[RMDB]
This 177-nucleotide RNA was probed chemically with DMS and 2A3. DMS adducts were read by reverse transcription with MarathonRT. The data come from the RNA Mapping Database (RMDB), library OK1LIB. For 2A3 the reverse transcriptase was SuperScript II with manganese.
RNA sequence: GGGAACGACUCGAGUAGAGUCGAAAAGAAGAGAGGAAGAUUUAGGGGAAGAAGAUAACAAUAUUCACGCGGUCUUCCCAGUUACGUGUGUAGACACCAUGAUUGUUAUCAAAACUAAAUAUGAGAAAAUGAUCCCAUCGUUCGCGAUGGGAUCAUUAAAAGAAACAACAACAACAAC
Reactivity to DMS in 0.01 (KOAc 150mM, MgCl2 10mM, bicine 150mM(pH8.5), 24C), signal-to-noise 2, nucleotides 027 to 126: g000a030a130g050a120g010a070g000g000a180a160g030a130u000u000u020a020g000g020g000g000a040a080g000a130a090g020a030u000a000a020c030a060a000u030a120u020u030c020a010c060g020c030g020g000u000c070u040u050c000c000c020a080g000u000u000a050c080g010u000g010u000g020u000a020g000a150c000a080c230c150a150u010g030a040u000u000g030u000u000a000u000c030a010a060a070a120c200u000a120a040a010u000a080u010g000a170g000a050a080
Reactivity to 2A3 in 0.01 (KOAc 150mM, MgCl2 10mM, bicine 150mM(pH8.5), 24C), signal-to-noise 1, nucleotides 027 to 126: g150a050a000g080a000g000a000g080g050a140a090g000a010u020u030u030a050g000g110g000g000a190a000g110a000a030g040a000u090a000a030c000a030a010u060a140u000u140c040a000c020g030c050g000g000u000c000u030u000c020c000c000a000g000u060u080a000c000g040u030g000u000g000u090a000g080a130c090a090c110c020a060u300g010a000u090u000g000u000u000a050u060c000a050a050a050a050c060u150a030a030a030u240a080u150g180a200g030a000a140